Structure probing data (2A3) for a 207-nucleotide construct. The 2A3 profile rests on 2,855 reads. Reactivities are given for positions 27 through 156. As a SHAPE reagent, 2A3 marks flexible, mostly unpaired nucleotides at the ribose 2'-OH. Conditions: 150 mM KOAc, 10 mM MgCl2 and 150 mM bicine (pH 8.5), 24 C. Source: RMDB library OK3TST, as collected in RNAgym.
RNA sequence: GGGAACGACUCGAGUAGAGUCGAAAACGAGGUGACAUGAGCAUGCGAAAGGAUGGUACGCCAUCCGAAACGUACGGAACGGCACUGCUUGUAGGAUGGGAAAGCAUGCUGUACCGCAACGACAACCAGCUUACUACAGCGUCGUUACUGUAGGACGCCACCACCGUAGGUUCGCCUACGGUGGUGGAAAAGAAACAACAACAACAAC
Reactivity to 2A3 in 0.01 (KOAc 150mM, MgCl2 10mM, bicine 150mM(pH8.5), 24C), signal-to-noise 4, nucleotides 027 to 156: c040g020a040g100g020u050g000a090c010a060u120g040a030g030c040a060u070g010c080g070a110a050a010g010g000a010u030g000g010u060a060c270g050c040c000a010u010c000c010g000a010a030a010c010g010u050a010c010g010g000a030a010c000g010g000c000a010c120u030g020c020u020u040g010u050a040g010g090a040u070g050g000g040a040a090a030g030c030a020u040g020c040u030g000u090a090c020c030g000c010a050a070c060g120a050c020a040a050c020c020a010g020c000u020u060a010c010u010a000c000a000g010c000g060u030c020g020u070u030a090c010u020g000u020a030g040g030a010c080g060